[RMDB]
RNA sequence: GGGAACGACUCGAGUAGAGUCGAAAAACACCUCCCAGGUCCUCGUGUGUACCUGGUUGAGAGGCUCAUUGCUUGUGAAAAUCCAUUCAUGGUUAACCAAUUGGCUUAUAGCUCUAGUGCAAAUGGCGAACCUAGUUCUUCGGAACUAGGAAAAGAAACAACAACAACAAC
Reactivity to DMS in 0.01 (KOAc 150mM, MgCl2 10mM, bicine 150mM(pH8.5), 24C), signal-to-noise 2, nucleotides 027 to 129: a080c150a210c060c010u000c000c000c000a040g000g000u000c030c060u040c300g000u010g000u000g020u050a030c020c020u000g000g030u010u040g000a030g030a100g030g000c050u020c070a070u020u020g000c070u000u080g000u000g000a090a030a060a050u030c050c040a060u010u010c100a050u020g010g010u030u020a080a060c050c060a010a060u040u020g010g000c060u010u030a070u040a100g000c080u000c030u040a050g010u040g000c040a030a040a090u030g000g000c090g010a080a120
Reactivity to 2A3 in 0.01 (KOAc 150mM, MgCl2 10mM, bicine 150mM(pH8.5), 24C), signal-to-noise 9, nucleotides 027 to 129: a000c050a060c000c010u000c000c000c000a010g010g000u020c020c020u150c120g150u130g040u040g020u190a030c010c000u000g000g000u050u120g030a050g010a020g050g000c030u030c060a090u050u120g010c040u070u080g020u020g080a040a040a030a060u030c040c010a040u030u120c040a060u090g030g020u050u110a050a050c010c010a070a100u050u060g030g000c020u090u130a090u070a140g030c010u010c040u080a040g040u050g060c020a030a040a120u070g040g000c030g030a010a020

This 170-nucleotide RNA was probed chemically with DMS and 2A3. 2A3 adducts were read by reverse transcription with SuperScript II with manganese. DMS adducts were read by reverse transcription with MarathonRT. Source: RMDB library 15KLIB, as collected in RNAgym.